[RMDB]
RNA sequence: GGGAACGACUCGAGUAGAGUCGAAAAUUAUGACACUUGAUUUAUUGAAGGACAUUAAAUUUGUUAUACCUGCUCUACAGCAUGCAUUUAUGAAACAUAAGGGCGGUGAUUCAACUGACUUCAUAGCGUAGUGCCAUGUUCGCAUGGCACAAAAGAAACAACAACAACAAC
Reactivity to DMS in 0.01 (KOAc 150mM, MgCl2 10mM, bicine 150mM(pH8.5), 24C), signal-to-noise 2, nucleotides 027 to 129: u090u040a000u050g020a010c100a040c220u010u040g020a050u000u000u000a050u070u000g020a010a010g000g070a140c040a030u040u030a000a010a010u040u030u010g000u010u050a000u000a040c100c020u000g030c040u010c000u000a110c150a000g040c080a000u000g040c090a080u000u020u070a020u040g010a040a060a080c080a080u060a100a040g000g000g000c040g040g010u020g020a080u030u010c000a070a090c090u020g010a150c030u000u000c010a000u000a050g020c020g020u050a030
Reactivity to 2A3 in 0.01 (KOAc 150mM, MgCl2 10mM, bicine 150mM(pH8.5), 24C), signal-to-noise 4, nucleotides 027 to 129: u160u070a070u120g050a030c010a020c040u010u060g050a010u120u070u140a080u020u100g080a070a030g080g030a000c040a060u010u140a050a020a050u100u110u060g020u050u020a050u010a010c010c000u080g010c010u020c010u030a050c020a020g030c010a030u030g030c020a010u040u100u120a050u160g060a100a050a010c050a030u070a010a000g010g000g000c010g000g030u020g030a040u040u060c000a050a010c030u040g020a010c020u050u050c050a020u020a040g020c070g080u050a010
Source: RMDB library 15KLIB, as collected in RNAgym. Structure probing data (DMS and 2A3) for a 170-nucleotide construct. DMS adducts were read by reverse transcription with MarathonRT. Reactivities are given for positions 27 through 129.